[RMDB]
RNA sequence: GGGAACGACUCGAGUAGAGUCGAAAAUGGGUGUGGUGGCGCGUGCCUGUAAUCCCAGCUACUCAGGAGGCUGAGGCAGGAGAAUCACUUGAACCCAGGAAGCAGAGGUUGCAGUGAACUGAGACGGCCAUACGGCAUGAUUCGUCAUGCCGUAUGGAAAAGAAACAACAACAACAAC
Reactivity to 2A3 in 0.01 (KOAc 150mM, MgCl2 10mM, bicine 150mM(pH8.5), 24C), signal-to-noise 2, nucleotides 027 to 126: u100g010g000g020u060g010u040g030g030u040g010g020c030g000c020g030u050g030c000c000u030g010u090a040a030u050c010c000c010a010g040c000u050a050c040u040c040a100g080g050a070g100g060c050u000g030a060g000g070c010a040g000g100a070g030a040a040u030c000a000c020u070u150g050a010a000c000c020c000a020g010g070a030a040g060c090a020g010a040g150g000u070u060g030c030a010g020u000g040a030a030c040u020g010a000g020a110c100g020g060
Reactivity to DMS in 0.01 (KOAc 150mM, MgCl2 10mM, bicine 150mM(pH8.5), 24C), signal-to-noise 4, nucleotides 027 to 126: u010g010g000g030u000g010u010g000g030u000g000g020c140g020c110g010u000g000c000c020u010g000u000a210a100u000c020c000c010a030g010c020u010a110c070u010c060a070g010g000a130g010g020c040u000g000a050g010g020c050a040g000g010a110g000a130a080u000c050a030c040u010u000g010a040a050c040c020c020a120g000g000a060a060g000c080a070g010a090g000g010u000u010g000c010a040g010u000g000a050a080c070u000g000a090g010a070c110g000g000